[RMDB]
RNA sequence: GGGAACGACUCGAGUAGAGUCGAAAAGCUGACACCUUACAGGAAACUCCUGUUGUGCCUGAUACUGUUGAAGUCCCACCGCAAGUGGUGAAACUUCCGUCUGCACCUCAGACUAUCCAGCCCGAGGGAAAGCACAGGUUCGCCUGUGCUAAAAGAAACAACAACAACAAC
Reactivity to 2A3 in 0.01 (KOAc 150mM, MgCl2 10mM, bicine 150mM(pH8.5), 24C), signal-to-noise 9, nucleotides 027 to 129: g060c040u030g010a010c000a040c050c020u050u150a030c010a010g010g040a100a110a050c030u020c010c000u000g000u040u030g010u010g020c020c060u040g010a060u050a130c050u100g140u250u100g040a020a000g030u050c020c010c000a020c030c030g090c140a150a090g020u040g070g000u090g070a070a020a020c000u020u010c010c010g010u000c010u020g020c010a060c010c000u060c010a010g010a060c020u050a080u070c030c020a010g050c010c010c030g020a080g030g020g040a060a120
Reactivity to DMS in 0.01 (KOAc 150mM, MgCl2 10mM, bicine 150mM(pH8.5), 24C), signal-to-noise 8, nucleotides 027 to 129: g020c060u040g000a070c020a080c080c120u000u000a000c060a090g040g050a060a120a110c140u000c030c000u020g010u000u000g020u030g000c050c050u000g020a000u050a070c110u000g050u060u020g010a030a020g000u000c080c000c000a020c000c000g030c240a110a220g000u000g000g010u020g030a010a010a010c020u020u010c040c090g000u020c020u000g040c100a060c030c040u060c030a010g020a050c050u000a100u060c140c070a110g040c030c030c050g060a050g030g030g040a070a100